[RMDB]
RNA sequence: GGGAACGACUCGAGUAGAGUCGAAAAUAAGAAAGACCCUAAUCAUCCAGACAUGAUCAAUGAGAUGGCAAGGGCUGAAAUGUCAUUGAAUCAGAUUCAAGGCAUCUUAUUGUCAUUUGCUGAAAGAAUCGAUAUGGCAUUUCGAUGCCAUAUCGAUAAAAGAAACAACAACAACAAC
Reactivity to 2A3 in 0.01 (KOAc 150mM, MgCl2 10mM, bicine 150mM(pH8.5), 24C), signal-to-noise 3, nucleotides 027 to 126: u210a050a040g120a110a030a000g160a110c000c010c000u020a030a010u100c040a070u000c060c050a000g000a090c000a030u050g000a070u120c040a000a080u040g000a000g000a010u020g040g130c080a080a060g120g000g030c070u040g000a000a020a080u300g050u170c180a120u090u160g150a120a050u090c010a020g060a120u100u020c020a050a010g050g000c000a000u000c000u020u050a030u000u040g030u020c020a040u010u010u100g020c030u010g100a130a090a050g240a050
Reactivity to DMS in 0.01 (KOAc 150mM, MgCl2 10mM, bicine 150mM(pH8.5), 24C), signal-to-noise 2, nucleotides 027 to 126: u050a190a090g000a100a130a120g000a110c000c010c000u030a110a100u010c070a020u050c050c020a000g000a050c090a050u030g020a050u050c000a060a000u000g000a020g020a000u000g040g000c090a100a180g010g000g010c030u040g010a030a060a060u020g000u000c150a090u030u020g010a120a090u000c090a000g010a300u010u000c020a040a300g000g010c000a000u000c050u000u000a030u030u000g000u000c050a030u000u010u030g000c000u020g040a050a130a090g000a020